[RMDB]
RNA sequence: GGGAACGACUCGAGUAGAGUCGAAAAGACGACGGUGAACCCAAACCCGGGAUGGAGGCCCGUCUUGAGCUGAUGAUGCAAGGCCACGGGACUGAUCUUGAAGUACCCCGCCAUGAGCGCGUAGGUCAAUGACAGAUUCGUUCGCGAAUCUGUCAUUAAAAGAAACAACAACAACAAC
Reactivity to DMS in 0.01 (KOAc 150mM, MgCl2 10mM, bicine 150mM(pH8.5), 24C), signal-to-noise 3, nucleotides 027 to 126: g030a070c040g020a070c070g000g000u000g020a090a160c070c000c010a060a160a120c130c030c050g000g000g000a050u040g000g000a070g000g000c010c000c020g000u000c030u030u030g020a120g020c040u000g030a080u000g000a080u030g000c070a110a050g000g010c040c070a090c090g000g000g000a040c050u000g010a070u010c060u000u000g020a110a090g000u020a120c040c010c020c020g000c050c060a130u010g010a110g040c060g010c070g020u000a050g000g010u000c110
Reactivity to 2A3 in 0.01 (KOAc 150mM, MgCl2 10mM, bicine 150mM(pH8.5), 24C), signal-to-noise 3, nucleotides 027 to 126: g080a000c080g000a000c120g000g010u070g080a050a130c030c020c000a040a070a120c010c000c010g070g100g010a040u080g050g070a050g070g050c000c010c000g040u000c040u040u140g080a040g010c050u020g010a110u110g000a020u080g140c080a150a070g000g010c060c020a030c100g020g000g010a030c030u020g050a110u030c000u070u140g060a040a040g050u160a150c000c000c020c040g010c000c030a140u170g060a060g090c050g000c000g040u050a050g030g000u060c040